[RMDB]
RNA sequence: GGGAACGACUCGAGUAGAGUCGAAAACUCUUGUUCUCGAGGGCCUUCCUUCUGCGGUGAUCCUCCCUCUCCUUGUCGGUGAACCCGCUCUUGUGAGGCCUCUUCAUAGGUCCGGAGUCGACCUCCAAAAUGCAGUGCUUCGGCACUGCAAAAAGAAACAACAACAACAAC
Reactivity to DMS in 0.01 (KOAc 150mM, MgCl2 10mM, bicine 150mM(pH8.5), 24C), signal-to-noise 2, nucleotides 027 to 129: c080u020c020u000u060g020u030u020c000u030c040g010a000g000g000g000c070c120u000u000c050c040u030u060c030u040g010c070g000g000u000g020a140u000c040c040u050c040c020c000u030c050u000c040c010u010u070g030u050c170g030g080u010g000a030a050c030c000c010g030c050u010c080u040u030g040u040g000a050g000g060c000c000u060c130u040u020c120a000u040a100g010g000u020c050c050g050g030a050g020u010c000g000a070c060c020u040c000c050a060a050a060a070
Reactivity to 2A3 in 0.01 (KOAc 150mM, MgCl2 10mM, bicine 150mM(pH8.5), 24C), signal-to-noise 4, nucleotides 027 to 129: c030u000c000u010u090g070u130u010c030u000c020g000a020g000g040g080c000c000u030u020c050c000u050u050c030u070g020c030g020g010u040g020a100u040c010c000u000c000c000c000u070c000u020c000c010u030u100g090u070c020g020g060u080g050a010a000c000c000c000g010c010u130c000u030u080g050u040g030a050g020g000c000c000u020c020u100u020c030a090u030a080g010g020u020c020c030g000g010a010g010u120c010g020a040c010c050u010c030c000a020a010a040a010
An RNA of 170 nucleotides, treated with DMS and 2A3 and read out base by base. The RNA was probed in 150 mM KOAc, 10 mM MgCl2 and 150 mM bicine (pH 8.5) at 24 C. It was measured as part of the RMDB library 15KLIB.